[RMDB]
Chemical mapping of a 207-nucleotide RNA with 2A3 and DMS. The RNA was probed in 150 mM KOAc, 10 mM MgCl2 and 150 mM bicine (pH 8.5) at 24 C. The DMS profile rests on 1,518 reads. DMS adducts were read by reverse transcription with MarathonRT.
RNA sequence: GGGAACGACUCGAGUAGAGUCGAAAACAGUUCUGGGCACUGGAGAUGCAAGGGUGGAGCAGACAGAUGAAGCUCUCCUCUCCCGGAGUCAACGUUCUGGGGGAUGAGAGGCCAUCAGCAAGUGCAUUUCCAUCUAUGAAGGGAGUAAAGCAGGGCAGCAUUAAAUCAGCUUCGGCUGAUUUAAUGCAAAAGAAACAACAACAACAAC
Reactivity to 2A3 in 0.01 (KOAc 150mM, MgCl2 10mM, bicine 150mM(pH8.5), 24C), signal-to-noise 2, nucleotides 027 to 156: c030a030g020u080u040c030u080g000g040g030c030a020c070u020g030g000a050g010a010u060g010c040a060a050g060g030g020u050g000g050a020g000c020a020g090a100c050a060g040a020u030g040a120a090g050c000u000c010u000c000c000u000c000u010c000c000c000g020g020a020g020u130c150a150a040c140g040u040u000c000u000g000g000g000g000g000a000u030g000a010g000a010g000g000c030c000a010u020c020a000g060c090a120a080g040u020g000c000a010u000u030u000c000c000a020u010c020u030a100u160g070a070a040g030g000g030a010g010u070a040a090a070g010c010a010g090g030g000c040a060
Reactivity to DMS in 0.01 (KOAc 150mM, MgCl2 10mM, bicine 150mM(pH8.5), 24C), signal-to-noise 1, nucleotides 027 to 156: c060a160g000u000u000c110u010g020g000g020c030a120c040u030g030g000a140g050a100u000g010c060a040a140g050g000g050u000g010g050a200g020c070a240g010a110c020a080g010a070u000g000a110a180g020c000u000c000u010c000c030u000c000u000c000c010c010g070g000a010g030u000c080a050a130c300g000u000u000c000u020g000g010g000g000g000a060u000g000a000g000a000g030g060c030c010a050u000c020a100g000c070a100a150g000u000g000c010a180u000u000u000c030c000a080u000c090u000a100u000g020a110a100g000g000g020a100g050u000a020a100a070g010c030a140g030g040g080c030a110
As a SHAPE reagent, 2A3 marks flexible, mostly unpaired nucleotides at the ribose 2'-OH.